[RMDB]
RNA sequence: GGGAACGACUCGAGUAGAGUCGAAAAAGGCAGCUUCCCGGCUUUUAUGCUACGGACGAUGCAAACGUAGCAGGCAUCGAAUUUUCGGCCCUUCGAAAAGCUGAGAUGAGCUCAGCAAGGGAAUCAACGAGGAUACUUGAUUCGUCAAGUAUCCUCGAAAAGAAACAACAACAACAAC
Reactivity to DMS in 0.01 (KOAc 150mM, MgCl2 10mM, bicine 150mM(pH8.5), 24C), signal-to-noise 3, nucleotides 027 to 126: a090g010g000c050a030g000c110u000u000c010c000c010g020g010c000u000u000u000u000a060u000g010c010u000a000c000g010g000a090c090g020a120u000g020c100a050a110a110c020g000u000a010g010c010a030g010g000c060a080u000c070g020a080a120u010u000u010u000c020g010g010c040c020c050u000u000c100g000a040a050a080a130g020c000u010g000a030g000a300u010g010a170g000c030u000c010a010g010c000a030a030g010g000g010a080a080u020c100a100a160
Reactivity to 2A3 in 0.01 (KOAc 150mM, MgCl2 10mM, bicine 150mM(pH8.5), 24C), signal-to-noise 2, nucleotides 027 to 126: a020g080g090c020a000g010c020u000u040c020c000c000g010g010c000u090u090u060u120a080u050g000c010u010a000c010g070g040a030c070g170a100u110g090c130a070a110a020c010g000u000a020g000c020a000g010g000c000a060u070c070g040a140a140u090u060u070u090c000g040g000c010c000c040u060u020c020g060a100a110a050a010g000c000u010g010a020g000a100u160g080a020g100c000u020c000a000g000c000a000a020g050g000g040a000a070u110c000a040a140